[RMDB]
RNA sequence: GGGAACGACUCGAGUAGAGUCGAAAAGAUAUGGAUACCGAAGAACUUCCCAUCGAAGAACUCGGAAACGAGGGAGAUGGAAGGGAGGUAUCCUAAGUCAAAACCUCGCCUGUUCGCAGGCGAGGAAUCCUAUCCUUGUGUUCGCACAAGGAUAGGAAAAAGAAACAACAACAACAAC
Reactivity to 2A3 in 0.01 (KOAc 150mM, MgCl2 10mM, bicine 150mM(pH8.5), 24C), signal-to-noise 1, nucleotides 027 to 126: g000a030u060a000u160g000g000a000u020a030c040c050g110a300a060g040a080a030c020u030u020c100c090c050a000u000c010g150a260a070g030a080a030c000u000c010g020g010a110a030a020c030g000a020g000g040g000a050g000a000u010g010g010a020a010g040g010g010a060g000g000u020a010u000c010c000u000a040a030g030u020c030a010a020a050a120c000c000u000c000g000c000c000u040g020u070u050c300g000c150a020g000g050c000g000a000g000g010a000a010
Reactivity to DMS in 0.01 (KOAc 150mM, MgCl2 10mM, bicine 150mM(pH8.5), 24C), signal-to-noise 1, nucleotides 027 to 126: g010a050u000a300u000g000g010a010u000a000c010c020g010a200a140g030a100a270c000u000u010c170c020c060a030u000c020g000a100a090g000a080a250c000u010c020g010g000a130a060a070c000g020a010g000g000g000a090g000a030u000g000g000a000a000g000g020g000a050g000g020u000a020u010c000c000u000a010a060g030u010c040a080a060a070a090c000c010u000c000g020c000c000u000g000u000u010c180g020c000a040g020g000c010g020a000g000g000a000a010